[RMDB]
RNA sequence: GGGAACGACUCGAGUAGAGUCGAAAAGGAAGAAAAGCACCCAGAGGGAGGAAGCCACACAGGGGUUUGCAGAGAAAUCACCUCCAGAGGACCCCUUCAGCGAACAGAACGAUCGCUUCACGCGGUGACAGCGACGGGUUCGCCCGUCGCAAAAGAAACAACAACAACAAC
Reactivity to 2A3 in 0.01 (KOAc 150mM, MgCl2 10mM, bicine 150mM(pH8.5), 24C), signal-to-noise 4, nucleotides 027 to 129: g030g030a010a040g010a020a110a020a010g000c000a030c010c010c040a020g060a050g100g020g030a010g010g010a040a050g030c020c010a020c000a010c030a030g010g010g000g020u030u000u120g070c040a030g000a000g030a100a090a020u050c020a080c030c000u030c010c030a070g040a040g050g050a030c000c000c010c000u040u160c020a010g000c010g000a030a000c010a050g070a070a030c070g020a070u040c030g000c010u100u160c080a050c060g110c060g100g020u020g020a010c050a040
Reactivity to DMS in 0.01 (KOAc 150mM, MgCl2 10mM, bicine 150mM(pH8.5), 24C), signal-to-noise 4, nucleotides 027 to 129: g000g000a000a000g020a070a060a070a100g060c060a110c050c020c050a150g000a080g010g000g030a030g020g010a060a100g000c070c040a060c260a090c160a040g050g010g010g010u000u010u000g000c300a140g020a020g020a080a080a170u000c150a150c150c040u000c030c080a020g020a170g000g010a000c110c040c020c010u010u060c090a020g030c040g020a020a020c050a090g040a000a100c090g030a150u010c060g030c020u000u020c000a040c080g040c180g000g030u020g010a060c140a080
Description:
Source: RMDB library 15KLIB, as collected in RNAgym. An RNA of 170 nucleotides, treated with 2A3 and DMS and read out base by base. The RNA was probed in 150 mM KOAc, 10 mM MgCl2 and 150 mM bicine (pH 8.5) at 24 C. For 2A3 the reverse transcriptase was SuperScript II with manganese. For DMS, 8,604 sequencing reads were counted.